This 170-nucleotide RNA was probed chemically with 2A3 and DMS.

RNA sequence: GGGAACGACUCGAGUAGAGUCGAAAAUGGAUAUGGGUGCAAUUGUGACUCGCUUAGGCAAGCAGCACUGCCCCAAUCUAAAGAUUCCAAUUUUUUAAACGAGUCCGGGGUUCUAUUGUAAAUGCCCAAAGCUGUACCUUCGGGUACAGCAAAAGAAACAACAACAACAAC
Reactivity to 2A3 in 0.01 (KOAc 150mM, MgCl2 10mM, bicine 150mM(pH8.5), 24C), signal-to-noise 4, nucleotides 027 to 129: u120g020g010a040u130a140u140g020g000g030u190g000c040a140a160u190u050g030u030g060a210c010u020c170g000c010u050u040a060g270g000c110a010a000g000c000a000g000c000a000c010u020g000c000c000c000c020a010a010u000c000u040a080a000a000g100a080u060u000c000c000a000a000u020u050u040u010u080u240a120a210a010c060g020a000g030u000c030c040g020g000g000g000u040u070c070u030a060u060u100g110u090a020a060a050u110g020c000c000c000a000a000a030
Reactivity to DMS in 0.01 (KOAc 150mM, MgCl2 10mM, bicine 150mM(pH8.5), 24C), signal-to-noise 3, nucleotides 027 to 129: u030g020g000a060u040a000u050g070g010g020u100g060c000a120a100u050u010g020u030g020a120c020u000c150g140c020u000u020a150g070g030c000a000a000g080c110a110g130c000a020c110u000g020c010c010c000c000a000a070u000c000u050a050a150a050g010a170u000u000c000c020a190a010u030u120u030u040u060u010a080a050a010c130g000a040g000u010c030c090g010g030g050g030u060u000c010u000a060u010u090g000u040a000a070a130u060g010c010c020c000a040a080a100
The RNA was probed in 150 mM KOAc, 10 mM MgCl2 and 150 mM bicine (pH 8.5) at 24 C.
For 2A3 the reverse transcriptase was SuperScript II with manganese.
The data come from the RNA Mapping Database (RMDB), library 15KLIB.